Structure probing data (2A3 and DMS) for a 177-nucleotide construct. For DMS the reverse transcriptase was MarathonRT. Conditions: 150 mM KOAc, 10 mM MgCl2 and 150 mM bicine (pH 8.5), 24 C.
[RMDB]
RNA sequence: GGGAACGACUCGAGUAGAGUCGAAAAGAUAUGGAGGCUGUGGUGGGAGCGUUGAGGUCGGAAACGACCUACACGCUUUGAUCACCACACGGCCUCCUAAGUCAAAACCCGAAGUUCGCUUCGGGAAGUAUAGUGGAACGUUCGCGUUCCACUAUACAAAAGAAACAACAACAACAAC
Reactivity to 2A3 in 0.01 (KOAc 150mM, MgCl2 10mM, bicine 150mM(pH8.5), 24C), signal-to-noise 3, nucleotides 027 to 126: g000a010u050a020u140g000g000a000g000g020c080u080g040u030g000g110u080g010g050g050a100g000c000g000u040u190g030a010g010g000u010c000g020g030a030a040a050c010g000a000c000c000u040a070c010a000c020g000c000u120u070u080g020a040u060c010a000c010c000a000c020a010c020g030g000c000c000u000c000c000u010a010a000g010u010c020a020a030a080a180c010c000c010g000a000a000g030u110u300c300g040c220u000u010c000g030g010g000a010a010
Reactivity to DMS in 0.01 (KOAc 150mM, MgCl2 10mM, bicine 150mM(pH8.5), 24C), signal-to-noise 3, nucleotides 027 to 126: g010a060u000a280u000g000g000a020g020g020c020u010g030u000g020g010u000g010g010g000a020g020c010g030u000u010g020a010g000g010u000c000g000g000a060a070a160c010g010a010c000c000u000a020c100a010c010g020c000u000u010u010g010a140u010c050a050c000c000a010c020a070c210g020g010c000c000u000c000c000u000a010a050g000u010c040a140a100a140a160c010c010c000g000a010a020g010u000u020c300g000c010u000u000c000g010g000g000a010a050
For 2A3, 8,964 sequencing reads were counted. It was measured as part of the RMDB library TTRDES.